[RMDB]
RNA sequence: GGGAACGACUCGAGUAGAGUCGAAAACAGACCGUAUCAUCCGUCGUGAAUUGGAACAAACAUUGUCAGAGCAAACUGACACUACAGGUGUCAGUGCAGCAGGAAGUGAGCUGUCGGGAACAUUGACGUGAAUUGCCCUGUUCGCAGGGCAAUUCACAAAAGAAACAACAACAACAAC
Reactivity to 2A3 in 0.01 (KOAc 150mM, MgCl2 10mM, bicine 150mM(pH8.5), 24C), signal-to-noise 1, nucleotides 027 to 126: c010a000g030a070c000c000g010u070a070u170c000a070u000c070c020g010u040c060g020u040g040a090a050u170u110g060g010a020a020c050a110a090a000c030a150u060u160g090u070c040a060g000a030g110c040a150a000a000c000u010g020a000c000a000c000u160a090c090a120g000g130u000g030u020c000a000g000u000g060c000a000g060c000a010g120g020a030a110g040u090g020a000g000c000u000g040u070c020g000g000g040a080a100c000a060u080u190g050a020c020
Reactivity to DMS in 0.01 (KOAc 150mM, MgCl2 10mM, bicine 150mM(pH8.5), 24C), signal-to-noise 1, nucleotides 027 to 126: c070a130g000a150c060c000g020u000a070u000c070a060u000c030c010g030u010c040g020u000g000a020a050u000u000g020g080a150a040c160a090a070a100c110a080u000u000g020u000c020a070g000a060g010c060a050a080a020c000u000g000a050c000a000c020u010a230c240a080g000g000u000g010u000c000a030g000u000g010c060a140g000c020a000g020g010a090a070g020u010g000a080g010c020u000g020u000c050g000g000g000a030a100c160a100u000u000g060a090c220
The record gives the reactivity of an RNA of 177 nucleotides to 2A3 and DMS. Values are in units of 0.01, from 0 to 300, in steps of 10. Source: RMDB library OK2TST, as collected in RNAgym.